Conditions: 150 mM KOAc, 10 mM MgCl2 and 150 mM bicine (pH 8.5), 24 C. This 177-nucleotide RNA was probed chemically with DMS. Values are in units of 0.01, from 0 to 300, in steps of 10. Reactivities are given for positions 27 through 126. It was measured as part of the RMDB library OK2TRN.

RNA sequence: GGGAACGACUCGAGUAGAGUCGAAAACUGACUGUGCCAUACUCCCCUUUUUCACGCUCACAUGCCCAGGUCCUGGGGACUUUAACAUGGGAAUUUCGGGGGCACAAUUUGGCCCAUGACAGAGGUGGUCGCGUAUGUAGUUCGCUACAUACGCGACAAAAGAAACAACAACAACAAC
Reactivity to DMS in 0.01 (KOAc 150mM, MgCl2 10mM, bicine 150mM(pH8.5), 24C), signal-to-noise 1, nucleotides 027 to 126: c050u000g020a130c030u010g020u000g020c000c040a070u010a140c150u000c020c000c010c050u000u010u000u000u000c040a080c170g000c060u010c080a110c080a020u000g010c010c020c170a100g000g000u000c060c030u000g010g010g010g010a040c090u000u030u000a100a160c040a030u020g010g020g010a040a060u010u000u000c200g000g010g000g000g000c170a030c110a080a130u000u010u000g020g010c000c020c000a050u020g000a110c150a080g010a070g000g010u000g030